RNA sequence: GGGAACGACUCGAGUAGAGUCGAAAAUAUGACGCGCUACGUUAGUGAUUGCGGCAACCAUAUCAACAAUGGCUAACAAUGGGACAAUCUUUGCUACGGGGAUAAAUAGUGCUAAAACCGGGCUCGCGUACUGCCAUAGAUUCGUCUAUGGCAGUACAAAAGAAACAACAACAACAAC
Reactivity to DMS in 0.01 (KOAc 150mM, MgCl2 10mM, bicine 150mM(pH8.5), 24C), signal-to-noise 4, nucleotides 027 to 126: u010a090u000g000a130c120g000c030g010c050u000a060c130g010u000u010a030g020u000g010a060u010u000g010c090g000g020c100a050a090c070c060a060u000a080u000c080a130a060c120a070a030u000g010g000c020u000a050a060c090a080a110u000g020g010g010a060c060a050a070u000c030u000u000u000g000c030u000a060c060g010g000g000g000a080u020a040a090a110u000a030g010u020g010c020u000a050a020a070a100c040c040g010g010g020c020u000c100g010c240
Reactivity to 2A3 in 0.01 (KOAc 150mM, MgCl2 10mM, bicine 150mM(pH8.5), 24C), signal-to-noise 2, nucleotides 027 to 126: u250a080u120g030a010c000g010c000g000c030u030a010c040g080u080u050a050g020u030g160a050u070u060g040c030g000g020c020a040a020c050c030a070u060a030u150c010a020a050c010a080a050u030g050g000c010u050a030a010c030a080a100u070g040g010g020a010c020a010a040u000c010u080u110u090g000c020u040a060c040g000g000g000g020a010u080a040a060a030u120a060g070u100g050c050u050a030a040a000a050c010c000g030g000g000c020u050c040g010c020
Chemical mapping of a 177-nucleotide RNA with DMS and 2A3. Conditions: 150 mM KOAc, 10 mM MgCl2 and 150 mM bicine (pH 8.5), 24 C. For 2A3, 2,597 sequencing reads were counted. The data come from the RNA Mapping Database (RMDB), library OK2TRN.